The record gives the reactivity of an RNA of 177 nucleotides to DMS and 2A3. For 2A3, 2,153 sequencing reads were counted. The reactions ran in a buffer of 150 mM KOAc, 10 mM MgCl2 and 150 mM bicine (pH 8.5), at 24 C. It was measured as part of the RMDB library M2PK50.

RNA sequence: GGGAACGACUCGAGUAGAGUCGAAAAGAAGGCACUUUCGAGUGCCUUCAUGGGGAGCUCAGGUCUCCCUCCCUUGCAAACUCCCUAAGCGAGGAGACCUAAUUAGGUGCACUUUCGAGUGCACCAAUAAGGAGUAAUCGUUCGCGAUUACUCCUUAAAAAGAAACAACAACAACAAC
Reactivity to DMS in 0.01 (KOAc 150mM, MgCl2 10mM, bicine 150mM(pH8.5), 24C), signal-to-noise 2, nucleotides 027 to 126: g000a000a010g000g010c010a000c000u010u000u020c190g020a020g020u000g000c000c000u000u010c000a020u010g000g010g010g010a020g000c060u010c220a010g010g010u000c000u000c020c000c000u000c000c000c000u000u000g030c220a080a130a140c180u000c010c000c000u010a080a160g020c290g010a050g000g000a020g010a020c010c010u000a120a090u010u010a150g010g010u000g000c000a010c000u010u000u000c110g010a020g010u000g010c000a010c010c000a020a030
Reactivity to 2A3 in 0.01 (KOAc 150mM, MgCl2 10mM, bicine 150mM(pH8.5), 24C), signal-to-noise 2, nucleotides 027 to 126: g000a000a000g010g000c030a010c010u070u080u160c260g090a000g000u010g000c010c000u000u000c000a000u000g010g020g010g000a010g000c040u060c190a000g040g010u000c000u000c020c000c000u000c000c000c000u000u040g050c030a110a010a070c060u020c000c010c020u110a080a030g080c060g090a050g000g000a010g000a000c010c000u010a030a090u110u150a030g000g000u010g000c000a010c000u130u070u040c250g110a010g000u000g000c000a010c000c000a000a000